RNA sequence: GGGAACGACUCGAGUAGAGUCGAAAACUUCUUCCAAAGCGGCAGGAGUGUCUUGCGUUGCGUUUUGCGACGGGGGCAUAUCUGCGGAGUUACAUUUGUUGCUAGAAUAAGCGUGAAUCAUAGUACACUCUACUUUACUGUUCGCAGUAAAGUAGAGAAAAGAAACAACAACAACAAC
Reactivity to DMS in 0.01 (KOAc 150mM, MgCl2 10mM, bicine 150mM(pH8.5), 24C), signal-to-noise 5, nucleotides 027 to 126: c130u000u010c060u010u000c040c050a080a140a120g020c080g000g030c010a010g010g010a180g020u000g000u000c010u000u000g010c010g030u000u000g000c000g020u000u010u010u020g010c010g010a000c000g000g000g000g000g010c010a010u000a040u000c010u000g000c020g000g000a100g010u010u000a070c140a120u000u000u000g010u000u000g020c030u000a090g010a100a120u010a070a050g010c050g010u010g000a070a050u010c080a090u010a090g000u000a110c180a180
Reactivity to 2A3 in 0.01 (KOAc 150mM, MgCl2 10mM, bicine 150mM(pH8.5), 24C), signal-to-noise 4, nucleotides 027 to 126: c010u090u000c010u110u000c060c020a100a080a050g200c100g090g000c030a010g000g130a060g040u000g020u000c000u000u100g300c020g000u020u010g010c030g070u100u070u230u300g000c010g000a000c010g000g000g000g030g040c020a010u010a130u040c010u030g020c030g020g020a050g030u080u120a020c020a140u030u070u250g110u130u150g020c010u030a050g040a300a100u170a100a010g000c030g030u040g050a020a030u080c070a090u050a090g050u030a060c040a010
Chemical mapping of a 177-nucleotide RNA with DMS and 2A3. Reactivities are given for positions 27 through 126. For DMS, 7,472 sequencing reads were counted. Source: RMDB library RFMREP, as collected in RNAgym. DMS (dimethyl sulfate) methylates the pairing face of unpaired adenines and cytosines.